[RMDB]
RNA sequence: GGGAACGACUCGAGUAGAGUCGAAAAGCUCAGGUCAGGCCAGGGGAUCCUGUGCCAAAGGUGCAGCUCUGUGUCUUGGCAGGGCUACUGGGGAGGAGGAAAGGAGGGAUGACCCAGGCAUCCCGAGCCAGCAUUGGUAGUUCGCUACCAAUGCUGGAAAAGAAACAACAACAACAAC
Reactivity to DMS in 0.01 (KOAc 150mM, MgCl2 10mM, bicine 150mM(pH8.5), 24C), signal-to-noise 2, nucleotides 027 to 126: g000c020u000c020a070g030g020u000c040a070g030g010c030c030a030g000g000g010g010a120u000c170c000u000g000u000g000c040c040a050a050a100g010g030u000g010c030a040g020c020u000c020u000g000u010g020u010c070u000u010g020g000c020a060g000g000g030c020u000a020c090u000g000g000g010g010a110g010g010a110g010g010a100a040a100g000g000a180g000g000g000a020u000g000a100c020c020c020a090g010g010c020a030u000c010c000c000g030a140g010
Reactivity to 2A3 in 0.01 (KOAc 150mM, MgCl2 10mM, bicine 150mM(pH8.5), 24C), signal-to-noise 2, nucleotides 027 to 126: g000c000u000c030a020g050g060u020c010a010g040g000c050c030a020g000g000g050g010a080u150c000c020u030g090u110g060c020c010a100a110a050g000g010u030g010c040a020g010c010u020c010u020g100u010g030u120c050u160u070g030g030c030a010g010g010g000c010u040a050c040u040g010g000g030g000a080g010g050a030g050g010a090a060a060g050g030a040g000g020g000a010u010g030a020c010c020c000a010g000g040c000a030u030c050c000c010g000a020g030